An RNA of 177 nucleotides, treated with 2A3 and DMS and read out base by base. Reactivities are given for positions 27 through 126. For 2A3 the reverse transcriptase was SuperScript II with manganese. DMS adducts were read by reverse transcription with MarathonRT. The DMS profile rests on 3,372 reads. Conditions: 150 mM KOAc, 10 mM MgCl2 and 150 mM bicine (pH 8.5), 24 C. DMS (dimethyl sulfate) methylates the pairing face of unpaired adenines and cytosines.
RNA sequence: GGGAACGACUCGAGUAGAGUCGAAAAUCGGGAGGCGCGCAACCAGAAGGACAUGACCUUCACCUCGGCACGUAACUUGUUGGGAAUCCUGCGAUUGUCCACCGCCUUGGCAUGGUUGCGUCUUUCCGAAGGGGUGAACAUUCGUGUUCACCCCUUCAAAAGAAACAACAACAACAAC
Reactivity to 2A3 in 0.01 (KOAc 150mM, MgCl2 10mM, bicine 150mM(pH8.5), 24C), signal-to-noise 2, nucleotides 027 to 126: u090c000g000g020g000a000g000g050c080g050c000g010c080a000a000c000c000a030g030a090a050g080g000a040c060a200u160g090a100c000c000u000u000c040a040c020c030u000c000g000g000c040a020c100g030u060a110a110c130u160u150g080u060u090g060g000g030a020a110u120c050c070u160g050c090g060a040u010u060g080u050c030c010a040c040c080g000c020c000u040u050g020g000c040a130u100g000g000u040u040g010c000g000u000c010u000u000u000c000c000
Reactivity to DMS in 0.01 (KOAc 150mM, MgCl2 10mM, bicine 150mM(pH8.5), 24C), signal-to-noise 4, nucleotides 027 to 126: u020c020g000g000g000a010g010g010c280g010c020g020c010a010a010c010c000a270g010a060a030g000g010a210c220a120u010g020a160c290c000u000u000c040a270c010c000u000c070g010g020c010a080c240g000u000a070a040c230u000u010g020u010u010g010g010g010a080a090u000c020c110u010g010c110g000a050u020u000g000u000c020c030a080c090c190g020c030c020u000u000g010g000c160a140u000g010g020u000u010g010c060g000u000c000u000u000u000c010c010